Background:
An RNA of 177 nucleotides, treated with 2A3 and DMS and read out base by base. DMS adducts were read by reverse transcription with MarathonRT. The 2A3 profile rests on 1,792 reads. The RNA was probed in 150 mM KOAc, 10 mM MgCl2 and 150 mM bicine (pH 8.5) at 24 C. Source: RMDB library OK2TRN, as collected in RNAgym.
RNA sequence: GGGAACGACUCGAGUAGAGUCGAAAAAGGUCACCAUAUUGAUGCCAAACUUAGUGUGUAGUGCACUACAGCCCAGAACUCCUGACUGAAGCCAUCCUCCGGCCUCAGCCUUCCGCGUAGCUGGGGCACUGUAGGGAUCUUUCGAGAUCCCUACAGUAAAAGAAACAACAACAACAAC
Reactivity to 2A3 in 0.01 (KOAc 150mM, MgCl2 10mM, bicine 150mM(pH8.5), 24C), signal-to-noise 2, nucleotides 027 to 126: a000g060g000u060c030a010c090c010a040u060a090u110u160g070a050u110g080c030c030a130a020a080c110u070u040a040g010u000g000u020g040u110a100g150u080g200c000a000c040u080a050c080a010g030c020c010c010a020g030a090a050c040u050c020c000u060g050a080c010u050g060a070a000g020c020c000a050u020c030c020u030c020c050g060g020c000c010u000c010a000g000c000c010u130u040c020c010g110c050g130u080a010g000c010u000g010g000g010g010c020
Reactivity to DMS in 0.01 (KOAc 150mM, MgCl2 10mM, bicine 150mM(pH8.5), 24C), signal-to-noise 3, nucleotides 027 to 126: a040g010g010u000c050a070c030c030a080u010a110u000u000g000a070u010g010c040c020a060a070a110c100u010u010a050g030u000g030u000g000u010a120g020u010g010c020a020c020u000a050c110a080g000c030c000c020a110g000a080a090c060u000c030c020u000g010a060c050u010g010a090a110g010c040c030a040u000c020c030u000c110c080g020g010c000c010u000c020a000g000c000c050u010u000c040c060g000c140g010u000a130g010c010u000g000g010g020g000c040